RNA sequence: GGGAACGACUCGAGUAGAGUCGAAAACUAAUACUCAAUUGCUUUGGUACCGACCAGAUUUGGUAAAUAGCCCGCCAACGGAUUGGAAUGCCAUGAUCGCUGAGGCGGCCCGGCUGCACGCGGCGGGGAUCGCCUUUUCAUUCGUGAAAAGGCGAUCAAAAGAAACAACAACAACAAC
Reactivity to 2A3 in 0.01 (KOAc 150mM, MgCl2 10mM, bicine 150mM(pH8.5), 24C), signal-to-noise 5, nucleotides 027 to 126: c020u040a070a090u120a200c040u030c090a060a160u100u080g050c040u150u090u060g040g010u060a150c040c060g100a050c030c070a080g060a300u130u110u090g030g000u020a050a140a110u060a060g100c030c010c030g000c010c000a100a070c060g040g070a090u000u100g060g050a130a080u120g030c000c010a050u120g040a170u070c030g000c090u050g020a040g160g040c000g010g020c000c010c010g040g010c000u020g000c020a040c110g050c030g010g000c020g010g000g000
Reactivity to DMS in 0.01 (KOAc 150mM, MgCl2 10mM, bicine 150mM(pH8.5), 24C), signal-to-noise 5, nucleotides 027 to 126: c030u010a070a100u010a070c060u010c070a040a070u010u000g010c080u010u000u000g000g000u000a080c160c100g010a090c040c030a070g000a090u000u010u000g000g010u000a030a090a090u000a120g020c030c010c010g030c020c000a050a210c120g010g000a130u020u010g000g010a110a140u000g010c000c010a110u000g010a060u000c040g020c020u000g010a150g030g010c010g010g010c100c130c240g000g010c020u000g010c080a070c060g020c250g000g000c020g020g000g010

An RNA of 177 nucleotides, treated with 2A3 and DMS and read out base by base.
The RNA was probed in 150 mM KOAc, 10 mM MgCl2 and 150 mM bicine (pH 8.5) at 24 C.
It was measured as part of the RMDB library OK2TRN.